[RMDB]
Chemical mapping of a 207-nucleotide RNA with DMS and 2A3. For DMS the reverse transcriptase was MarathonRT. The RNA was probed in 150 mM KOAc, 10 mM MgCl2 and 150 mM bicine (pH 8.5) at 24 C. 2A3 adducts were read by reverse transcription with SuperScript II with manganese.

RNA sequence: GGGAACGACUCGAGUAGAGUCGAAAAUGGAAUGGUUGUUCCAGGAGAAGCGGGCCGAGGACCCAGGGUCAACUCGUUAACGAUCCUUGGAAACCUAUAAGUGCCGAGAACACUCGCACUGACUUCGCUCUCGCUGCCUGAUCAGUGAUCGAAGGGUCAUCACAAUACUCUUCGGAGUAUUGUGAUGAAAAGAAACAACAACAACAAC
Reactivity to DMS in 0.01 (KOAc 150mM, MgCl2 10mM, bicine 150mM(pH8.5), 24C), signal-to-noise 1, nucleotides 027 to 156: u000g010g020a070a110u010g040g010u010u010g010u010u020c020c020a180g000g020a060g000a070a070g020c030g030g010g020c110c050g000a060g000g030a120c050c000c040a090g000g000g000u000c020a040a100c080u000c070g030u000u000a030a150c070g000a090u000c000c000u000u020g020g010a110a080a100c050c010u000a100u000a070a000g020u000g010c060c030g020a270g010a030a100c050a060c030u000c010g010c050a040c040u000g000a050c020u010u000c060g010c020u000c010u000c100g030c020u000g000c040c040u000g030a150u010c000a080g020u000g010a060u000c030g020a070a130g000g020g020u000
Reactivity to 2A3 in 0.01 (KOAc 150mM, MgCl2 10mM, bicine 150mM(pH8.5), 24C), signal-to-noise 1, nucleotides 027 to 156: u140g040g030a070a070u060g020g040u020u070g010u080u000c030c020a010g020g030a100g020a160a010g040c030g000g000g020c040c020g020a030g010g010a070c040c040c040a030g000g000g030u010c000a020a130c040u050c130g100u070u100a030a000c050g020a030u040c000c000u020u030g010g000a050a020a040c040c020u080a090u040a190a010g000u030g140c250c090g020a010g000a080a060c190a080c040u000c010g000c000a000c000u020g030a050c000u010u040c040g010c000u010c000u000c000g070c040u000g000c040c050u060g010a080u080c010a040g050u030g100a050u270c010g030a050a000g020g000g020u010